[RMDB]
RNA sequence: GGGAACGACUCGAGUAGAGUCGAAAAGUGACUGAGAAACAGUCGCCACGAUCGACGAUCCACGGGAGACACUAGCAUGGUGAGGGAAGUAAGACGAUAACCGUGAUAUCGUGUAAGUGUUAGGACGACAAUGAUUCAUUUUCGAAUGAAUCAUUGUAAAAGAAACAACAACAACAAC
Reactivity to DMS in 0.01 (KOAc 150mM, MgCl2 10mM, bicine 150mM(pH8.5), 24C), signal-to-noise 9, nucleotides 027 to 126: g010u000g000a020c000u000g000a190g010a160a160a150c020a010g010u000c000g010c010c060a070c120g000a100u020c060g000a060c040g000a060u000c120c020a040c040g000g000g000a110g010a110c080a040c040u010a120g010c100a060u020g000g000u010g000a080g000g000g020a070a100g010u020a080a070g010a100c060g000a070u020a070a140c040c030g000u010g000a100u010a010u000c020g010u000g010u030a080a100g010u010g000u010u010a050g010g010a300c300g000
Reactivity to 2A3 in 0.01 (KOAc 150mM, MgCl2 10mM, bicine 150mM(pH8.5), 24C), signal-to-noise 9, nucleotides 027 to 126: g040u030g000a000c010u010g010a020g160a210a140a020c010a000g000u000c000g000c010c020a060c040g030a090u090c040g080a030c020g010a040u010c020c020a010c020g010g010g010a060g030a020c020a010c030u050a050g050c030a080u100g040g010u050g040a060g030g040g010a020a040g040u110a070a030g090a020c040g020a040u040a060a020c010c010g000u010g020a040u020a000u060c010g000u010g010u040a080a040g000u000g010u050u060a050g020g040a020c030g000

The data come from the RNA Mapping Database (RMDB), library OK1LIB. An RNA of 177 nucleotides, treated with DMS and 2A3 and read out base by base. As a SHAPE reagent, 2A3 marks flexible, mostly unpaired nucleotides at the ribose 2'-OH. The 2A3 profile rests on 30,557 reads. For DMS, 41,017 sequencing reads were counted. The reactions ran in a buffer of 150 mM KOAc, 10 mM MgCl2 and 150 mM bicine (pH 8.5), at 24 C.